[RMDB]
RNA sequence: GGGAACGACUCGAGUAGAGUCGAAAAUCCACUAUGAAUCUAGUCACUAAAUAAACACAAUUAGCUACUGUGUGUAAUAGUGAGUGUUGAUAACACAAAAGAAUAGUAUAGUUUUGGAAGAUUAUACGCGCCCUUGCUCCGUUCGCGGAGCAAGGAACCAUAUCUCGCUGUUCGCAGCGAGAUAUGGAAAAGAAACAACAACAACAAC
Reactivity to DMS in 0.01 (KOAc 150mM, MgCl2 10mM, bicine 150mM(pH8.5), 24C), signal-to-noise 1, nucleotides 027 to 156: u020c010c010a100c050u000a070u010g000a120a120u010c060u000a190g030u000c000a000c020u010a020a040a060u000a090a180a010c000a000c000a010a020u000u000a240g000c200u000a090c060u000g050u000g000u040g030u070a150a260u000a030g000u000g000a050g010u000g000u000u020g010a060u000a040a140c070a130c070a070a060a050a210g000a170a300u040a070g040u010a040u000a000g040u000u000u010u000g000g000a200a180g000a040u020u000a010u010a010c000g010c160g010c160c000c020u000u010g000c020u040c000c000g020u000u000c230g050c110g070g000a010g010c000a000a010g010g000a000a030
Reactivity to 2A3 in 0.01 (KOAc 150mM, MgCl2 10mM, bicine 150mM(pH8.5), 24C), signal-to-noise 4, nucleotides 027 to 156: u040c020c000a040c060u160a170u290g170a160a040u030c050u120a070g110u020c010a010c010u010a020a050a040u050a030a080a000c020a010c010a030a130u140u100a090g040c050u160a050c050u040g000u020g010u010g000u020a010a040u000a010g000u000g020a030g020u030g040u010u040g070a180u160a210a010c030a000c020a050a110a030a000g050a070a130u100a130g030u020a010u000a020g020u000u050u140u170g130g030a100a030g010a040u030u010a010u030a020c040g040c010g080c060c000c000u000u000g000c000u000c000c000g030u050u060c110g020c010g110g000a010g000c000a000a000g000g010a000a000